[RMDB]
RNA sequence: GGGAACGACUCGAGUAGAGUCGAAAACAUUCCUGGCGUGGAAGUAGUGGCCAUUGCCAACCGCACUGCUGAGUCCGCUGCAAAGGCUGGGGAGCCCUUUGGCAUCACCAAGGCAACUGGGAACUGGUAGGGCACAAAGUUUCGACUUUGUGCCCUAAAAAGAAACAACAACAACAAC
Reactivity to DMS in 0.01 (KOAc 150mM, MgCl2 10mM, bicine 150mM(pH8.5), 24C), signal-to-noise 1, nucleotides 027 to 126: c240a300u000u000c000c020u000g030g010c010g000u020g010g000a080a060g000u000a080g040u020g010g000c020c040a090u000u010g040c030c010a050a120c130c070g000c020a040c100u000g010c050u010g020a150g020u000c010c030g000c040u010g020c070a070a110a110g010g000c040u000g020g050g000g010a160g010c060c010c110u000u000u000g030g020c040a040u000c060a100c080c030a100a150g010g010c030a060a080c060u020g020g020g010a110a100c070u020g000g010
Notes
Structure probing data (DMS) for a 177-nucleotide construct. DMS adducts were read by reverse transcription with MarathonRT. The data come from the RNA Mapping Database (RMDB), library OK2TRN. Conditions: 150 mM KOAc, 10 mM MgCl2 and 150 mM bicine (pH 8.5), 24 C.